[RMDB]
RNA sequence: GGGAACGACUCGAGUAGAGUCGAAAAGUCGUGAUGAUGAGCAACGCCGGAGACGCGACUUCGGUUGUGCUGAACGACCUUCAGGACGCGGCGCGGGCGAAGAUCCUGACCGGCGACACGGACAGCAUGUAAGCGAGAUAUUCGUAUCUCGCUUACAAAAAGAAACAACAACAACAAC
Reactivity to DMS in 0.01 (KOAc 150mM, MgCl2 10mM, bicine 150mM(pH8.5), 24C), signal-to-noise 4, nucleotides 027 to 126: g000u000c010g020u010g010a100u010g000a170u010g010a090g000c120a120a170c040g010c000c000g000g020a110g020a150c150g000c180g000a080c000u000u000c030g000g000u000u010g010u000g000c040u000g000a110a100c020g000a100c020c030u000u000c200a090g020g010a070c030g020c020g000g000c020g010c050g020g000g010c000g010a030a050g000a120u000c010c020u000g020a190c030c000g000g000c030g000a080c070a060c070g010g000a080c060a070g010c110a100
Reactivity to 2A3 in 0.01 (KOAc 150mM, MgCl2 10mM, bicine 150mM(pH8.5), 24C), signal-to-noise 2, nucleotides 027 to 126: g040u020c010g020u020g030a130u060g010a070u060g070a090g090c040a100a090c020g000c000c000g030g050a110g040a040c030g000c070g050a000c000u000u000c010g300g170u030u030g000u040g040c000u000g020a190a060c010g000a030c010c000u130u190c110a120g040g000a000c010g000c000g040g000c000g000c010g040g010g010c010g010a010a000g050a150u020c000c020u050g030a090c000c020g000g050c000g020a020c000a000c040g050g010a040c040a070g100c050a110
This 177-nucleotide RNA was probed chemically with DMS and 2A3. The 2A3 profile rests on 2,687 reads. For DMS, 4,200 sequencing reads were counted. The RNA was probed in 150 mM KOAc, 10 mM MgCl2 and 150 mM bicine (pH 8.5) at 24 C. For 2A3 the reverse transcriptase was SuperScript II with manganese.